[RMDB]
RNA sequence: GGGAACGACUCGAGUAGAGUCGAAAAGACGCCUUUAGAAGAAGAGGCUAGGGGGUAUUCCGGUGUGGGAUACUUAGUAACAUGCAACGCUAAUUGCAUAAGAUUGUAGGACGGAAUUUACAGUCUUUAGAGAUAAGCACGUUCGCGUGCUUAUCAACCUUAGAUCGAGAUUCGUCUCGAUCUAAGGAAAAGAAACAACAACAACAAC
Reactivity to DMS in 0.01 (KOAc 150mM, MgCl2 10mM, bicine 150mM(pH8.5), 24C), signal-to-noise 2, nucleotides 027 to 156: g030a120c080g010c020c020u010u010u010a100g030a150a130g010a140a150g010a050g020g020c000u010a080g000g020g030g010g030u000a050u000u000c020c020g010g060u000g030u020g030g020g010a020u000a020c040u020u010a070g020u000a070a130c080a070u000g010c020a060a130c050g040c120u000a090a150u000u000g000c010a080u010a050a040g010a030u000u000g000u010a010g000g000a200c050g060g000a070a300u000u000u000a040c050a060g000u000c000u010u000u000a080g020a200g000a020u000a000a010g030c000a000c000g030u000u000c300g000c040g030u000g020c000u000u000a000u000c010a040a130
Reactivity to 2A3 in 0.01 (KOAc 150mM, MgCl2 10mM, bicine 150mM(pH8.5), 24C), signal-to-noise 6, nucleotides 027 to 156: g060a010c070g020c010c000u070u070u110a240g040a270a010g020a060a010g010a040g030g000c030u030a080g020g020g000g030g020u030a030u040u030c030c030g100g090u210g040u170g080g010g000a010u020a040c010u040u060a060g030u070a050a050c030a060u020g000c010a020a020c060g030c150u110a090a050u090u040g000c000a010u010a100a000g010a030u030u040g010u030a020g000g090a030c090g030g060a080a030u140u050u030a030c020a020g000u000c000u040u080u110a110g040a000g000a050u000a010a000g000c000a000c000g010u040u050c110g000c010g100u000g000c000u000u000a000u000c000a000a000